Record summary
An RNA of 177 nucleotides, treated with DMS and 2A3 and read out base by base. Conditions: 150 mM KOAc, 10 mM MgCl2 and 150 mM bicine (pH 8.5), 24 C. For 2A3, 1,026 sequencing reads were counted.

RNA sequence: GGGAACGACUCGAGUAGAGUCGAAAACCUCUUCCUCAUGGAUUUUGAAUUGUGAGAGGGUCUCCGAGAGGGCCUGUAUGUGGGUGCGGUUCUCCUCACUCUGGGCGCGGACCUUGAGGAUGGAGUCCACCGUACACAGGUUCGCCUGUGUACGGUGAAAAGAAACAACAACAACAAC
Reactivity to DMS in 0.01 (KOAc 150mM, MgCl2 10mM, bicine 150mM(pH8.5), 24C), signal-to-noise 2, nucleotides 027 to 126: c020c000u000c040u010u000c070c040u000c020a020u010g020g010a110u000u000u000u000g010a120a090u000u000g020u000g010a060g010a110g030g020g000u000c070u020c020c040g010a120g010a140g010g000g000c030c000u000g030u000a060u000g020u010g010g010g000u000g010c120g000g000u000u010c060u000c010c010u000c040a130c020u000c040u010g010g000g010c030g010c150g030g000a120c010c010u010u010g010a050g020g000a060u010g000g000a030g020u000c060
Reactivity to 2A3 in 0.01 (KOAc 150mM, MgCl2 10mM, bicine 150mM(pH8.5), 24C), signal-to-noise 1, nucleotides 027 to 126: c000c010u010c020u050u000c000c010u020c010a090u080g170g030a260u140u130u160u210g130a140a110u140u100g030u050g060a050g000a070g030g060g000u070c100u010c060c060g070a060g050a060g090g080g060c020c020u030g060u100a180u200g110u210g030g040g010u030g030c030g000g030u080u030c020u040c020c010u020c020a100c000u020c050u020g000g080g000c120g000c070g110g020a170c000c060u000u020g020a010g040g050a040u140g000g010a040g030u010c060